The record gives the reactivity of an RNA of 177 nucleotides to 2A3 and DMS. It was measured as part of the RMDB library OK2TST. For DMS the reverse transcriptase was MarathonRT. In probing experiments dimethyl sulfate is read out at A N1 and C N3, which are open when not base-paired. The 2A3 profile rests on 2,195 reads.

RNA sequence: GGGAACGACUCGAGUAGAGUCGAAAAUCAGAACAUAUCGGAAGCUGUCGCGGCCCAUGGCGGGGUGACGCGACCGGUAGACCAGGAGGUGGGUAGCGGUCUCGUCGUCGCGUUCCUGCGUGCUGGCACGUGGCGCACUAUUCGUAGUGCGCCACGUAAAAGAAACAACAACAACAAC
Reactivity to 2A3 in 0.01 (KOAc 150mM, MgCl2 10mM, bicine 150mM(pH8.5), 24C), signal-to-noise 2, nucleotides 027 to 126: u080c000a020g100a130a060c030a060u140a060u200c060g040g000a060a010g070c120u140g060u100c040g030c060g130g030c000c000c030a090u120g130g000c070g000g060g000g030u100g040a020c000g010c000g000a000c000c000g050g030u030a030g090a110c010c000a030g030g080a090g050g200u100g010g040g020u010a030g080c030g000g010u030c040u000c060g130u050c030g000u010c010g000c000g030u070u130c010c010u010g000c010g040u060g030c000u030g040g000c060
Reactivity to DMS in 0.01 (KOAc 150mM, MgCl2 10mM, bicine 150mM(pH8.5), 24C), signal-to-noise 1, nucleotides 027 to 126: u000c040a110g000a110a070c120a050u000a080u000c050g000g090a080a150g010c040u000g000u000c020g020c040g000g010c030c020c030a090u000g020g040c020g000g000g020g000u010g010a010c010g030c070g010a040c010c020g020g010u010a020g010a070c020c020a060g020g000a100g010g020u000g000g000g020u000a120g010c050g000g000u000c010u000c040g000u010c090g010u000c010g020c020g020u010u010c010c020u020g000c050g010u000g020c030u000g000g030c120